Structure probing data (2A3) for a 207-nucleotide construct.
[RMDB]
RNA sequence: GGGAACGACUCGAGUAGAGUCGAAAACGCACUCGCAGCUUAAUAACCUGCGCUGAGCCCUUCUCCCCCACCUUGCCUGUGUCCUAGGGAAUUGGAAGGUCAUCCUUCACAGGAUCGUGUGGAAGUCAUUACUCGUGAGUGUUCGCACUCACGAGAAGAACCUGAGUAGCUUCGGCUACUCAGGUUCAAAAGAAACAACAACAACAAC
Reactivity to 2A3 in 0.01 (KOAc 150mM, MgCl2 10mM, bicine 150mM(pH8.5), 24C), signal-to-noise 1, nucleotides 027 to 156: c020g030c010a080c020u020c000g030c030a050g020c000u010u000a000a000u030a070a000c020c000u000g030c000g000c130u050g000a020g050c020c040c010u170u100c060u000c000c000c000c040c000a000c000c000u000u300g050c000c000u010g000u010g050u170c080c100u180a070g000g110g000a060a240u150u090g110g030a050a050g020g020u040c040a030u030c000c000u030u010c000a000c050a050g010g000a000u010c020g000u010g020u020g070g000a080a030g110u040c040a180u110u210a060c010u000c000g010u010g000a000g000u020g000u010u010c020g050c090a000c000u000c000a000c000g020a000g010a000a020
Values cover nucleotides 27 to 156. The RNA was probed in 150 mM KOAc, 10 mM MgCl2 and 150 mM bicine (pH 8.5) at 24 C. The data come from the RNA Mapping Database (RMDB), library M2RFPK. The 2A3 profile rests on 597 reads.